[RMDB]
RNA sequence: GGGAACGACUCGAGUAGAGUCGAAAAGAUUUAAACAGAUGGAGAUACACAAAUCUUUGAAUCCCAGUAACAAAAAUCCUGGUAUCUCGGGUAUACAGUAGUGCAGAUACUGUAUUUUUAAUGCUCCUUAGGUUUUCCAUCUUCGGAUGGAAAACAAACAUAAUAACCAGUUCGCUGGUUAUUAUGUAAAAGAAACAACAACAACAAC
Reactivity to DMS in 0.01 (KOAc 150mM, MgCl2 10mM, bicine 150mM(pH8.5), 24C), signal-to-noise 2, nucleotides 027 to 156: g040a010u010u000u000a090a100a260c090a130g030a290u000g010g000a060g000a050u000a010c020a290c070a080a040a030u000c010u000u000u000g010a160a230u000c010c000c010a150g010u000a150a110c080a030a060a060a040a100u000c010c020u000g030g020u000a010u000c000u000c020g000g000g030u000a070u000a010c010a030g040u000a040g010u000g010c160a220g010a180u000a000c000u000g000u010a000u010u000u010u020u020a090a190u000g000c020u000c030c020u000u000a150g020g000u000u000u000u020c010c000a000u010c000u000u000c270g040g020a040u000g000g000a030a000a000a000c010a060a100
Reactivity to 2A3 in 0.01 (KOAc 150mM, MgCl2 10mM, bicine 150mM(pH8.5), 24C), signal-to-noise 3, nucleotides 027 to 156: g000a010u030u040u090a080a120a040c050a050g110a090u140g040g010a010g000a010u010a010c000a000c020a040a050a010u010c000u010u010u020g020a020a010u020c000c020c010a000g120u150a100a060c050a050a170a000a010a060u020c000c000u020g000g010u000a000u000c020u000c010g020g000g000u010a000u000a000c000a000g020u030a000g040u060g300c050a010g080a250u000a020c000u000g000u000a010u000u020u000u030u130a130a140u080g030c000u180c080c080u090u130a040g170g000u010u010u000u020c000c000a010u000c000u020u070c220g070g000a000u000g000g000a000a000a000a000c000a000a030